[RMDB]
Source: RMDB library VIROID, as collected in RNAgym.
This 177-nucleotide RNA was probed chemically with DMS.
Reactivities are given for positions 27 through 126.
The reactions ran in a buffer of 150 mM KOAc, 10 mM MgCl2 and 150 mM bicine (pH 8.5), at 24 C.
For DMS, 722 sequencing reads were counted.
RNA sequence: GGGAACGACUCGAGUAGAGUCGAAAACCCGAAGCAAGUAAGAUAGAGAAAAAGCGGUUCUCGGGAGCUUCAGUUGUUUCCACCGGGUAGUAGCCGAAGCGACAGCGCAAAGGGGGCGAGGGGUGGUUAGCUAUUAGAAGUUCGCUUCUAAUAGCUAAAAAGAAACAACAACAACAAC
Reactivity to DMS in 0.01 (KOAc 150mM, MgCl2 10mM, bicine 150mM(pH8.5), 24C), signal-to-noise 1, nucleotides 027 to 126: c010c000c020g030a070a110g040c040a050a130g000u020a040a030g020a110u010a120g020a140g010a000a030a120a100a100g050c070g020g030u000u020c010u010c020g060g020g010a110g010c030u020u010c050a120g000u020u000g020u000u010u000c010c030a100c110c080g000g000g010u000a060g020u000a070g010c000c070g010a050a060g000c060g000a060c160a060g010c050g030c070a070a080a130g020g010g020g010g000c020g010a090g000g010g000g010u010g010g020u010